This 177-nucleotide RNA was probed chemically with DMS and 2A3. 2A3 is a SHAPE reagent: it acylates the 2'-hydroxyl of flexible nucleotides of all four kinds. Values cover nucleotides 27 to 126. Source: RMDB libraries RFM100 and RFMREP, as collected in RNAgym. Conditions: 150 mM KOAc, 10 mM MgCl2 and 150 mM bicine (pH 8.5), 24 C. For 2A3 the reverse transcriptase was SuperScript II with manganese.
RNA sequence: GGGAACGACUCGAGUAGAGUCGAAAAAUAUUUGGAUGAAAAAGCAGCAAAAAAGUGCGUUGUACCUAUCUUUAUUGUCAUUAAAGUACCGUGCAGGCUUGCACUUGUGUACUCAGGCAAAUAGAGUCAGAUGUAAUGAAUUCGUUCAUUACAUCUGAAAAGAAACAACAACAACAAC
Reactivity to DMS in 0.01 (KOAc 150mM, MgCl2 10mM, bicine 150mM(pH8.5), 24C), signal-to-noise 5, nucleotides 027 to 126: a070u020a060u000u020u010g010g010a090u000g000a030a040a090a100a090g030c050a040g010c080a000a070a070a080a070a070g000u000g000c060g020u000u000g010u000a080c110c030u000a060u010c010u000u000u000a030u000u010g000u000c040a100u020u010a070a070a020g000u000a010c080c060g000u000g000c000a040g010g020c200u010u010g010c000a010c000u030u010g020u010g000u000a040c010u000c150a080g010g010c020a000a020a030u010a030g010a040g020u010
Reactivity to 2A3 in 0.01 (KOAc 150mM, MgCl2 10mM, bicine 150mM(pH8.5), 24C), signal-to-noise 9, nucleotides 027 to 126: a000u130a110u050u120u090g070g010a060u070g100a060a040a030a040a010g030c060a000g020c050a020a050a050a060a070a120g100u070g040c050g020u020u020g020u060a060c010c020u070a070u110c010u020u070u030a070u030u050g050u010c060a110u030u170a130a070a000g000u000a000c000c010g000u000g000c000a020g160g200c130u160u050g000c000a000c000u120u110g050u030g000u060a000c010u000c050a030g010g000c000a010a060a110u060a010g020a020g030u010